Structure probing data (DMS and 2A3) for a 207-nucleotide construct. In probing experiments dimethyl sulfate is read out at A N1 and C N3, which are open when not base-paired. Source: RMDB library OK3TST, as collected in RNAgym. The RNA was probed in 150 mM KOAc, 10 mM MgCl2 and 150 mM bicine (pH 8.5) at 24 C.
RNA sequence: GGGAACGACUCGAGUAGAGUCGAAAAUGUUCUAUGCCACCGAGGCCCCUUCUUUCUCAGCAGCGCAUGGUGCUGUAGGCUCACUGGUCUCUGCCUUUCCACUCCAAGAGCACAUAUAUUCCCCCUUGGGCCAAACUAUUUUUGACUGCCAGUGGUCUCAGUUAUUAGACUUCGGUCUAAUAACUGAAAAAGAAACAACAACAACAAC
Reactivity to DMS in 0.01 (KOAc 150mM, MgCl2 10mM, bicine 150mM(pH8.5), 24C), signal-to-noise 1, nucleotides 027 to 156: u000g010u000u000c030u010a100u020g020c030c040a070c030c050g020a160g010g080c020c000c040c000u010u010c030u000u000u000c030u010c050a130g000c070a070g030c070g000c050a090u000g020g020u020g020c010u010g030u000a080g020g000c070u000c020a040c040u030g020g010u000c060u010c040u010g030c030c010u000u000u010c030c010a080c060u000c010c010a100a130g020a070g040c030a040c060a060u020a160u000a270u000u000c020c000c000c050c080u010u010g010g020g030c050c000a020a100a090c110u000a070u000u000u020u010u000g020a060c030u010g000c000c010a080g020u000g030g010u000c070
Reactivity to 2A3 in 0.01 (KOAc 150mM, MgCl2 10mM, bicine 150mM(pH8.5), 24C), signal-to-noise 1, nucleotides 027 to 156: u070g050u100u000c010u020a110u040g080c050c060a050c020c070g070a050g020g010c000c010c040c030u000u080c010u050u190u050c090u030c030a050g000c000a030g000c000g050c070a090u150g180g000u060g090c010u030g040u060a070g000g000c030u000c050a030c030u030g060g000u000c030u030c020u120g060c000c000u020u140u060c040c030a120c030u030c000c020a070a000g030a020g090c080a000c000a050u210a020u060a100u090u090c010c000c000c010c020u000u020g000g030g010c010c000a000a010a000c030u060a090u100u200u010u000u060g020a010c000u020g020c020c020a010g040u000g010g000u020c020
Reactivities are given for positions 27 through 156.